Annotation: Structure probing data (2A3 and DMS) for a 207-nucleotide construct. The data come from the RNA Mapping Database (RMDB), library OK3TST. The RNA was probed in 150 mM KOAc, 10 mM MgCl2 and 150 mM bicine (pH 8.5) at 24 C. 2A3 is a SHAPE reagent: it acylates the 2'-hydroxyl of flexible nucleotides of all four kinds. 2A3 adducts were read by reverse transcription with SuperScript II with manganese.
RNA sequence: GGGAACGACUCGAGUAGAGUCGAAAACUGGAGACAUCUUCGAUCAAAUCAAGAACUUCAAAGGCUAAUGUCCGAAUCCCAUCUGAACAAAGAGAGGAGGUGACUAAUGGGACUAAAAGACACACUUAUCCACGCAUGGAACGUCUUCACAAAGCCCCCAUACAAAUCCAUUCGUGGAUUUGUAUGGAAAAGAAACAACAACAACAAC
Reactivity to 2A3 in 0.01 (KOAc 150mM, MgCl2 10mM, bicine 150mM(pH8.5), 24C), signal-to-noise 3, nucleotides 027 to 156: c040u030g020g010a010g010a010c060a080u040c030u080u060c140g080a040u080c070a050a180a100u030c030a110a020g030a100a150c020u110u060c060a130a090a000g020g010c020u090a080a060u130g030u000c020c010g030a020a050u000c020c010c000a020u000c020u040g080a120a060c030a120a160a030g080a010g010a020g010g030a020g000g020u100g020a030c000u050a090a060u070g020g000g040a030c010u050a040a080a040a020g050a020c020a010c000a020c060u080u090a070u030c030c010a020c060g120c100a100u110g020g010a040a010c040g010u000c000u030u040c040a030c020a040a070a040g000c000c020c000
Reactivity to DMS in 0.01 (KOAc 150mM, MgCl2 10mM, bicine 150mM(pH8.5), 24C), signal-to-noise 2, nucleotides 027 to 156: c020u000g020g000a120g000a100c030a130u000c020u030u020c060g020a070u000c060a070a080a170u000c110a170a160g000a070a150c050u010u010c020a070a070a110g010g000c000u000a100a100u000g000u000c000c030g000a170a140u000c000c010c010a070u000c060u000g000a100a190c070a040a130a100g010a070g010a140g000g010a090g050g050u000g010a120c040u010a040a070u000g020g060g030a050c020u010a060a080a110a080g000a010c030a020c060a050c060u010u030a060u000c010c020a040c110g060c100a090u000g030g000a020a080c130g000u000c010u000u010c000a000c030a090a180a080g000c030c010c060